[RMDB]
RNA sequence: GGGAACGACUCGAGUAGAGUCGAAAACAGGAGGCUGAGGCAGGAGAAUUGCUUGAACCUGGGAAGUGGAGGUUGCAGUGAACCAAGAUCUUGCCAUUGCACUCCAGCCUGGGUGACAAGAGCAGAAAUCAAUAACAUCGUUCGCGAUGUUAUUGAUAAAAGAAACAACAACAACAAC
Reactivity to DMS in 0.01 (KOAc 150mM, MgCl2 10mM, bicine 150mM(pH8.5), 24C), signal-to-noise 6, nucleotides 027 to 126: c080a110g010g010a060g010g010c050u000g010a040g010g010c030a050g000g000a070g000a090a090u000u000g020c010u000u000g010a190a030c010c010u000g000g000g000a040a090g010u000g010g010a020g000g000u010u010g010c010a010g020u000g010a080a120c140c080a050a080g010a090u010c120u000u000g020c110c000a030u000u000g010c020a060c020u000c010c010a030g010c020c010u000g010g000g020u000g000a100c120a070a070g000a070g010c050a080g000a090a090
Reactivity to 2A3 in 0.01 (KOAc 150mM, MgCl2 10mM, bicine 150mM(pH8.5), 24C), signal-to-noise 5, nucleotides 027 to 126: c030a020g030g040a040g020g040c060u050g040a030g030g010c020a010g020g030a050g040a080a130u150u060g030c000u010u030g020a020a010c010c010u010g030g000g010a160a130g250u060g000g030a020g050g050u230u150g010c000a000g000u000g040a050a040c080c000a080a020g070a300u120c130u090u060g040c050c000a000u000u010g010c010a010c010u000c010c000a010g000c000c000u010g000g010g000u030g010a040c030a040a090g010a010g060c020a010g070a050a130
This 177-nucleotide RNA was probed chemically with DMS and 2A3. The data come from the RNA Mapping Database (RMDB), library OK2TRN. The 2A3 profile rests on 8,348 reads. Conditions: 150 mM KOAc, 10 mM MgCl2 and 150 mM bicine (pH 8.5), 24 C. Values are in units of 0.01, from 0 to 300, in steps of 10.